[RMDB]
RNA sequence: GGGAACGACUCGAGUAGAGUCGAAAAGAGAACUCUCGUGUGUACACGAUCGUGAUCUCACACUCGAGUACACACGUACGUUCACGAGAACGAGUACGAUCUCGUGAUCGAACGAUCGUGUGAGAGAGAGAACACGUUCGUACUCACACUCUCGUUCUCAUGUCCUCACUUUCGAGUGAGGACAUGAAAAAGAAACAACAACAACAAC
Reactivity to DMS in 0.01 (KOAc 150mM, MgCl2 10mM, bicine 150mM(pH8.5), 24C), signal-to-noise 1, nucleotides 027 to 156: g000a090g010a020a080c000u000c020u000c040g070u010g050u000g000u000a110c050a080c000g040a030u000c000g050u040g000a110u000c080u000c020a160c090a190c000u000c020g000a300g040u000a050c010a030c000a020c020g020u000a020c000g040u000u010c000a050c070g000a020g050a060a030c030g000a140g120u000a220c060g000a040u000c000u030c010g000u000g000a020u000c030g020a140a110c080g070a070u000c000g030u000g010u000g000a240g010a100g000a110g020a110g000a110a130c000a040c000g020u020u010c050g000u000a210c080u000c000a060c040a000c040u000c030u020c000g000u000u000c000
Reactivity to 2A3 in 0.01 (KOAc 150mM, MgCl2 10mM, bicine 150mM(pH8.5), 24C), signal-to-noise 5, nucleotides 027 to 156: g100a000g020a050a050c060u060c050u070c180g000u030g000u020g020u050a020c050a000c100g020a030u040c010g000u010g020a100u010c000u030c000a030c000a020c020u020c010g080a080g300u300a030c000a000c020a000c010g000u040a020c010g010u000u010c030a010c070g010a020g000a050a010c040g020a030g150u220a100c100g060a160u040c000u000c000g000u000g000a010u000c030g010a030a030c010g060a150u170c050g000u010g000u050g010a090g000a000g000a000g000a000g030a040a010c000a000c010g010u000u010c010g000u020a020c030u010c000a000c000a000c000u010c000u010c020g020u080u000c010